[RMDB]
RNA sequence: GGGAACGACUCGAGUAGAGUCGAAAAGAUAUGGAGUUGAGCUGUUAGGGAGAAACCUUUAAGGAACGGACAUGUCGGAAACGACAUGUCCGUGUAAAGGUUGGACGAAGGCUACAACUCCUAAGUCGUAAAGUAGUCUCUUCGGAGACUACUUUACAAAAGAAACAACAACAACAAC
Reactivity to DMS in 0.01 (KOAc 150mM, MgCl2 10mM, bicine 150mM(pH8.5), 24C), signal-to-noise 1, nucleotides 027 to 126: g000a020u010a070u020g000g000a040g030u000u000g010a050g010c000u010g010u030u000a130g000g000g000a300g000a180a040a000c000c000u000u000u000a070a120g050g060a110a010c000g000g000a000c000a000u000g000u000c000g000g000a060a030a040c000g010a000c000a010u000g020u000c010c000g030u000g000u000a000a010a030g010g000u000u000g010g020a100c030g000a150a300g000g010c010u000a100c000a000a000c000u000c000c000u000a000a070g010u000c050

Structure probing data (DMS) for a 177-nucleotide construct. It was measured as part of the RMDB library TTRINS. The reactions ran in a buffer of 150 mM KOAc, 10 mM MgCl2 and 150 mM bicine (pH 8.5), at 24 C. For DMS the reverse transcriptase was MarathonRT.